Source information
An RNA of 177 nucleotides, treated with DMS and 2A3 and read out base by base. For DMS the reverse transcriptase was MarathonRT. For 2A3, 29,621 sequencing reads were counted. For 2A3 the reverse transcriptase was SuperScript II with manganese. It was measured as part of the RMDB library TTRDEL. Reactivities are given for positions 27 through 126.
RNA sequence: GGGAACGACUCGAGUAGAGUCGAAAAGAUAUGGACCGCCCUUAGGGAGAAGAGACGUCGGAAACGACGUUGGCUUCGAGGAUCUAAGUAACAUGUCCUAAGUCAAAGCCUUCGUUCGCGAAGGCAAGAUACCUUACGUGUUCGCACGUAAGGUAUCAAAAGAAACAACAACAACAAC
Reactivity to DMS in 0.01 (KOAc 150mM, MgCl2 10mM, bicine 150mM(pH8.5), 24C), signal-to-noise 9, nucleotides 027 to 126: g000a020u000a030u010g000g000a020c010c300g000c250c260c000u000u000a010g000g000g000a010g000a020a000g020a300g000a000c000g010u000c000g010g000a020a020a030c000g010a010c000g000u000u000g010g020c000u000u000c000g000a030g010g020a010u000c010u000a010a010g010u010a120a170c200a110u010g000u000c000c000u010a010a120g000u000c010a110a090a110g010c010c000u000u000c000g020u000u010c180g010c010g010a010a010g000g000c000a020a010
Reactivity to 2A3 in 0.01 (KOAc 150mM, MgCl2 10mM, bicine 150mM(pH8.5), 24C), signal-to-noise 7, nucleotides 027 to 126: g000a000u020a000u040g000g000a000c030c050g160c070c020c000u000u010a010g000g000g010a020g000a010a000g000a000g000a010c000g000u000c010g000g000a010a000a000c010g000a000c000g010u010u010g090g110c000u000u000c020g060a230g000g000a000u000c010u010a000a060g060u060a240a110c110a300u300g000u000c000c000u000a000a010g000u000c060a120a100a040g010c000c000u000u000c010g040u020u100c250g000c020g160a000a000g000g000c000a000a010